Chemical mapping of a 177-nucleotide RNA with DMS and 2A3. Source: RMDB library OK1LIB, as collected in RNAgym. Conditions: 150 mM KOAc, 10 mM MgCl2 and 150 mM bicine (pH 8.5), 24 C. For 2A3 the reverse transcriptase was SuperScript II with manganese.

RNA sequence: GGGAACGACUCGAGUAGAGUCGAAAAUUCAGCAAGCACGGGAGAACAAUCAACCGAUUGUAGCAUUAGAAUCAACAAUUAUUUCGCAUGGUAUGCCGUACCCACAAAAUGUUGAAAUGGCAACAACUCUAAGUCCAUUUUUCGAAAUGGACUUAGAAAAAGAAACAACAACAACAAC
Reactivity to DMS in 0.01 (KOAc 150mM, MgCl2 10mM, bicine 150mM(pH8.5), 24C), signal-to-noise 7, nucleotides 027 to 126: u030u020c030a090g000c070a080a080g000c070a080c040g000g000g010a170g010a090a070c090a040a080u010c050a100a140c100c140g000a040u020u000g010u000a090g000c080a090u020u030a110g010a060a060u020c080a070a090c100a040a060u020u040a070u020u020u000c070g030c050a030u000g010g010u010a070u010g010c010c000g010u010a120c010c000c020a050c190a070a050a060a080u010g000u000u000g010a020a050a050u020g010g010c100a020a050c130a040a100c130
Reactivity to 2A3 in 0.01 (KOAc 150mM, MgCl2 10mM, bicine 150mM(pH8.5), 24C), signal-to-noise 7, nucleotides 027 to 126: u080u020c000a010g010c030a020a050g040c020a050c040g020g040g010a070g040a110a060c070a060a100u060c010a020a130c030c060g060a020u010u050g030u050a020g020c050a070u100u100a100g060a100a040u100c030a010a080c010a060a070u140u100a120u060u190u080c020g020c100a070u100g040g000u130a050u060g010c010c010g030u070a110c000c010c010a070c040a040a120a020a040u130g010u030u030g020a070a060a200u040g030g020c020a020a000c010a020a020c020